[RMDB]
RNA sequence: GGGAACGACUCGAGUAGAGUCGAAAAGAUCGGAGAUCGAGAGCCAUGGACGGAUCAUGGUGCCCACCCCGAAGGGGUCCUGCCCGCUCCCGUUGAGGGUGUGCCAGUAGGCAAGGGCGAAGCGGAGCAUGCGACCACUAUUCGUAGUGGUCGCAUGAAAAGAAACAACAACAACAAC
Reactivity to DMS in 0.01 (KOAc 150mM, MgCl2 10mM, bicine 150mM(pH8.5), 24C), signal-to-noise 3, nucleotides 027 to 126: g000a070u000c030g010g000a090g000a070u000c030g000a080g000a230g020c000c010a040u010g000g010a150c160g010g020a100u000c010a030u010g000g010u000g020c010c010c030a170c050c020c000c020g010a140a090g010g000g000g000u010c040c030u010g010c030c000c030g010c050u000c020c000c020g010u000u010g000a240g010g010g000u000g020u000g020c020c030a170g010u000a080g010g020c030a130a100g000g000g020c040g000a080a070g020c050g010g010a160g000
Reactivity to 2A3 in 0.01 (KOAc 150mM, MgCl2 10mM, bicine 150mM(pH8.5), 24C), signal-to-noise 1, nucleotides 027 to 126: g040a060u090c090g080g030a120g020a080u030c010g000a020g010a020g130c000c000a020u030g010g030a080c140g030g070a080u160c000a020u020g010g030u030g060c000c000c000a030c030c000c000c000g070a140a080g000g010g000g000u030c020c040u050g030c020c000c020g000c020u060c000c010c000g040u040u170g100a100g000g000g020u040g030u060g040c020c000a110g110u130a070g120g000c030a040a060g020g000g040c070g020a040a000g060c020g000g030a030g050
Conditions: 150 mM KOAc, 10 mM MgCl2 and 150 mM bicine (pH 8.5), 24 C. Chemical mapping of a 177-nucleotide RNA with DMS and 2A3. DMS (dimethyl sulfate) methylates the pairing face of unpaired adenines and cytosines. Reactivities are given for positions 27 through 126. It was measured as part of the RMDB library OK2TST. For 2A3 the reverse transcriptase was SuperScript II with manganese.